[RMDB]
RNA sequence: GGGAACGACUCGAGUAGAGUCGAAAAAUUCUUCGUGUUAGCUAGCGUUAGUGAGUCGAUGGUAAGCCCAGUUGACGCGGCUUUUGCCGCCACCAUGAUGUACUUCGUCUGCACGUAGUAAUGAGGCCCUGCCCAUAGCAUUCGUGCUAUGGGCAGGAAAAGAAACAACAACAACAAC
Reactivity to DMS in 0.01 (KOAc 150mM, MgCl2 10mM, bicine 150mM(pH8.5), 24C), signal-to-noise 2, nucleotides 027 to 126: a130u010u000c030u000u000c050g000u000g010u000u010a020g010c300u010a060g000c040g040u000u000a040g040u000g020a130g010u000c010g000a040u000g000g010u020a100a080g010c050c050c030a120g020u000u010g020a070c260g010c040g010g020c020u020u000u010u000g020c020c010g000c000c120a050c020c030a020u010g000a070u010g030u000a020c020u010u000c030g010u010c040u000g000c000a020c050g020u000a060g000u000a030a030u000g010a150g020g000c090
Reactivity to 2A3 in 0.01 (KOAc 150mM, MgCl2 10mM, bicine 150mM(pH8.5), 24C), signal-to-noise 1, nucleotides 027 to 126: a010u040u010c010u030u050c000g000u050g020u050u190a040g010c110u020a000g000c010g050u220u070a010g010u050g090a040g030u000c110g150a130u040g040g000u060a050a050g000c030c010c030a040g070u050u200g080a070c070g040c000g040g010c050u130u170u160u300g010c000c000g040c000c010a030c010c020a030u080g020a020u010g070u170a040c010u020u000c020g010u020c010u020g000c000a000c040g030u010a010g030u030a010a100u100g050a090g060g000c000